RNA sequence: GGGAACGACUCGAGUAGAGUCGAAAAGCCAUUAUGUUCAUGCUCGCCUGAAGGGUGGUCUUAUUUUAAAGUUUGACUCUGGCACCGUUAGCAAGACUUCAGACUGGAAGUGCAAGGUGACAGAUGUGUAUCGGUUCGUUCGCGAACCGAAAAAGAAACAACAACAACAAC
Reactivity to DMS in 0.01 (KOAc 150mM, MgCl2 10mM, bicine 150mM(pH8.5), 24C), signal-to-noise 2, nucleotides 027 to 129: g020c030c010a090u000u000a100u090g000u000u000c040a060u030g070c040u040c120g030c050c050u010g000a030a060g000g000g000u000g030g000u050c020u040u050a000u010u020u030u090a010a130a110g010u000u060u040g000a050c100u000c020u030g010g040c010a050c040c050g030u050u040a140g000c040a150a150g040a000c020u000u060c060a080g020a120c210u060g060g000a040a080g020u000g020c070a060a120g040g000u030g010a010c030a010g010a040u050g040u070g010u030a040
Reactivity to 2A3 in 0.01 (KOAc 150mM, MgCl2 10mM, bicine 150mM(pH8.5), 24C), signal-to-noise 3, nucleotides 027 to 129: g060c030c050a060u170u120a190u130g110u030u020c060a020u050g030c000u060c060g050c010c010u070g080a070a040g070g030g000u050g000g020u000c000u010u040a180u090u110u000u030a060a090a030g000u000u040u070g050a010c000u000c010u030g000g010c020a020c060c060g090u010u000a060g020c030a060a000g030a100c020u020u000c020a140g020a300c190u180g030g000a000a000g010u020g000c000a010a070g000g000u020g000a000c000a030g050a060u100g030u080g000u020a040